An RNA of 177 nucleotides, treated with DMS and read out base by base. It was measured as part of the RMDB library OK2TRN. Values cover nucleotides 27 to 126. For DMS the reverse transcriptase was MarathonRT. The reactions ran in a buffer of 150 mM KOAc, 10 mM MgCl2 and 150 mM bicine (pH 8.5), at 24 C. Values are in units of 0.01, from 0 to 300, in steps of 10.

RNA sequence: GGGAACGACUCGAGUAGAGUCGAAAAUGCGCCUGCGACGGAUUCAGGUUGCCCUCGAACUCGGUGAAGAUCUGCGAGUACGGCUUGCCGACGAUGUUGGCCAGCACGUUGAGCCGGCCCCGGUGCGACCGCAGGGAGCUUUCGAGCUCCCUGCGGUAAAAGAAACAACAACAACAAC
Reactivity to DMS in 0.01 (KOAc 150mM, MgCl2 10mM, bicine 150mM(pH8.5), 24C), signal-to-noise 2, nucleotides 027 to 126: u010g030c060g010c020c000u000g020c210g030a120c030g000g000a140u010u000c020a040g010g000u010u010g040c050c260c030u010c020g000a100a140c120u000c030g030g000u000g010a130a090g000a060u000c050u000g020c070g000a120g020u020a070c070g000g000c020u000u000g000c000c000g020a020c030g010a190u030g000u000u000g000g030c030c090a040g020c020a050c060g020u010u000g010a120g020c030c000g010g000c040c030c040c100g010g020u000g020c090g000